[RMDB]
RNA sequence: GGGAACGACUCGAGUAGAGUCGAAAAUCAAUGCAGGUGUAACAACACCUUUAAGCACUUACAUGUUAACAAACAGUGAGUUACUAUCAUUGAUCAAUGAUAUGCCUAUAACAAAUGAUCAGAAAAAUCAACGCAAAUAGUUCGCUAUUUGCGUUGAAAAAGAAACAACAACAACAAC
Reactivity to 2A3 in 0.01 (KOAc 150mM, MgCl2 10mM, bicine 150mM(pH8.5), 24C), signal-to-noise 2, nucleotides 027 to 126: u090c010a020a010u140g060c040a020g000g010u030g020u050a100a160c090a030a020c000a010c000c000u000u020u030a040a010g000c010a010c010u010u030a010c040a260u050g000u050u050a300a110c120a180a070a000c000a050g000u000g010a020g010u010u050a060c040u050a030u040c000a020u010u080g010a010u020c030a050a080u030g010a020u020a030u190g030c040c010u120a110u060a230a080c070a050a090a050u080g000a000u060c030a020g120a060a090a000a030a010
Reactivity to DMS in 0.01 (KOAc 150mM, MgCl2 10mM, bicine 150mM(pH8.5), 24C), signal-to-noise 3, nucleotides 027 to 126: u010c040a030a050u000g050c300a040g040g030u000g020u010a160a100c300a100a070c000a010c010c000u000u000u000a110a060g010c290a060c010u010u000a020c010a060u000g020u000u010a140a090c300a150a030a000c040a000g030u010g010a030g000u000u000a080c190u000a040u000c010a000u010u000g010a000u010c030a050a060u000g010a020u000a020u010g000c010c020u000a040u010a040a110c150a050a010a090u000g000a000u000c050a180g020a020a080a090a060a100

An RNA of 177 nucleotides, treated with 2A3 and DMS and read out base by base.
Conditions: 150 mM KOAc, 10 mM MgCl2 and 150 mM bicine (pH 8.5), 24 C.
For DMS, 1,602 sequencing reads were counted.
The 2A3 profile rests on 2,117 reads.
The data come from the RNA Mapping Database (RMDB), library OK2TRN.